[RMDB]
RNA sequence: GGGAACGACUCGAGUAGAGUCGAAAAGAUAUGGAUCGAGGCAACAGCCAUGUGGUCGGAAACGACCAUAUGGACAUGCCUCAUCCUAAGUCAAACUUUAGUCGACUCUUCGGAGUCGACUAAAGAACGAGAUCAAACGGUUCGCCGUUUGAUCUCGAAAAGAAACAACAACAACAAC
Reactivity to DMS in 0.01 (KOAc 150mM, MgCl2 10mM, bicine 150mM(pH8.5), 24C), signal-to-noise 1, nucleotides 027 to 126: g040a010u000a220u030g000g000a000u010c190g020a000g010g010c000a040a100c300a170g000c000c000a000u000g000u010g000g010u000c000g010g000a040a030a080c000g000a010c010c000a000u000a000u000g000g000a220c100a050u000g000c010c000u000c000a010u000c000c000u000a010a040g000u000c020a100a190a200c010u000u000u000a010g000u000c020g000a050c000u010c000u010u010c260g010g010a060g020u000c000g030a010c000u000a000a000a030g000a110a110
This 177-nucleotide RNA was probed chemically with DMS. Conditions: 150 mM KOAc, 10 mM MgCl2 and 150 mM bicine (pH 8.5), 24 C.